[RMDB]
RNA sequence: GGGAACGACUCGAGUAGAGUCGAAAAGAUAUGGAUGGCUGGGAGGAACUACCAAGAGGGUCGGAAACGACCUAACUUGGCCGAAGAACAGCCAUCCUAAGUCAAAAGUACUUGUUCGCAAGUACAACCUACAACAGAUGUUCGCAUCUGUUGUAGGAAAAGAAACAACAACAACAAC
Reactivity to 2A3 in 0.01 (KOAc 150mM, MgCl2 10mM, bicine 150mM(pH8.5), 24C), signal-to-noise 2, nucleotides 027 to 126: g000a010u070a020u130g020g010a000u000g000g020c020u030g030g000g020a060g030g050a130a150c090u120a090c240c000a000a000g020a040g010g020g030u010c010g000g000a030a050a020c010g010a010c060c010u030a120a070c010u000u010g000g000c030c030g170a200a030g010a030a020c010a000g000c010c000a010u000c000c000u000a000a000g000u000c030a000a040a040a160g020u000a010c010u010u020g040u100u130c300g000c180a000a000g010u010a010c000a030a030
Reactivity to DMS in 0.01 (KOAc 150mM, MgCl2 10mM, bicine 150mM(pH8.5), 24C), signal-to-noise 2, nucleotides 027 to 126: g000a030u000a300u000g000g000a000u010g000g000c000u010g000g000g030a190g020g000a040a100c080u010a290c030c000a030a030g030a300g000g000g040u000c020g000g000a070a060a230c000g000a000c010c000u020a010a070c010u000u000g000g000c050c060g020a100a090g000a120a210c020a020g010c000c000a000u000c000c000u010a000a080g030u000c030a060a070a170a070g010u000a000c000u000u000g020u010u010c200g000c010a030a000g020u010a000c010a120a150